Chemical mapping of a 177-nucleotide RNA with DMS and 2A3. Source: RMDB library OK2TST, as collected in RNAgym. For DMS, 22,805 sequencing reads were counted.
[RMDB]
RNA sequence: GGGAACGACUCGAGUAGAGUCGAAAAAGCGUUAAUGACAAUGACAUCGGCAAUCAGUGCCGAAUUCUACCGCUCCGUCAAUCUGCCCUGGCUGGCAAGCAUUGACGCUGACCAGCAUAUAGGUGGAAUGACUUUUAAUGUUCGCAUUAAAAGUCAUAAAAGAAACAACAACAACAAC
Reactivity to DMS in 0.01 (KOAc 150mM, MgCl2 10mM, bicine 150mM(pH8.5), 24C), signal-to-noise 9, nucleotides 027 to 126: a050g010c030g010u000u000a040a060u000g010a090c160a100a100u010g010a070c160a140u000c000g000g000c010a060a220u010c250a130g020u000g020c010c000g010a020a040u000u000c040u000a070c140c030g010c060u000c060c040g000u010c050a030a120u000c060u000g010c020c000c060u010g020g010c050u000g000g010c150a050a060g010c020a080u000u010g010a090c120g010c010u000g000a230c020c010a050g000c080a090u010a060u000a050g010g010u000g000g010a080
Reactivity to 2A3 in 0.01 (KOAc 150mM, MgCl2 10mM, bicine 150mM(pH8.5), 24C), signal-to-noise 9, nucleotides 027 to 126: a010g020c020g010u030u050a090a030u160g050a080c080a110a130u100g010a020c010a120u020c010g000g000c010a030a160u130c070a250g240u020g070c000c000g010a010a050u050u010c010u030a050c000c030g020c030u040c030c010g040u030c010a040a100u000c020u040g020c000c010c010u020g090g000c040u020g010g000c030a050a030g010c010a050u060u210g070a060c070g000c010u010g030a110c000c010a010g020c020a030u100a020u070a150g050g000u020g010g030a070

Values are in units of 0.01, from 0 to 300, in steps of 10.